[RMDB]
The data come from the RNA Mapping Database (RMDB), library OK1LIB. Chemical mapping of a 177-nucleotide RNA with 2A3 and DMS. The DMS profile rests on 7,404 reads. Reactivities are given for positions 27 through 126. The RNA was probed in 150 mM KOAc, 10 mM MgCl2 and 150 mM bicine (pH 8.5) at 24 C.

RNA sequence: GGGAACGACUCGAGUAGAGUCGAAAACUAUCAACUAUGUUAUUCAACGACGUAUGACCGAGGCCAAGUUUGCGCUGACAAACACUGAGUCGCCACUGGCAGAAAUUUCAUGGCGGGUAGGAUAUGAUCCUAAUUUUAGCUUCGGCUAAAAUUAGGAAAAAGAAACAACAACAACAAC
Reactivity to 2A3 in 0.01 (KOAc 150mM, MgCl2 10mM, bicine 150mM(pH8.5), 24C), signal-to-noise 8, nucleotides 027 to 126: c010u040a040u150c040a040a030c040u060a060u090g040u070u050a080u070u090c060a070a010c050g130a020c040g100u120a120u180g070a070c020c060g040a090g030g030c020c040a110a110g000u030u060u080g070c160g030c090u130g050a090c030a000a110a020c050a030c140u120g050a030g080u080c010g020c010c010a030c020u010g010g000c010a010g080a020a070a030u060u070u020c030a020u040g030g000c000g000g000g010u030a030g030g050a030u040a090u270g080a060
Reactivity to DMS in 0.01 (KOAc 150mM, MgCl2 10mM, bicine 150mM(pH8.5), 24C), signal-to-noise 5, nucleotides 027 to 126: c000u000a050u010c050a050a080c060u000a000u000g010u000u000a040u000u010c130a140a140c080g000a080c090g010u020a030u010g020a080c140c030g000a150g010g010c020c040a050a050g010u000u030u010g000c080g040c110u020g030a070c050a050a080a070c210a160c150u020g010a140g000u010c030g000c010c060a050c060u000g000g000c040a070g000a030a060a080u030u010u010c000a020u000g000g010c300g000g000g020u000a020g030g000a090u010a020u030g000a190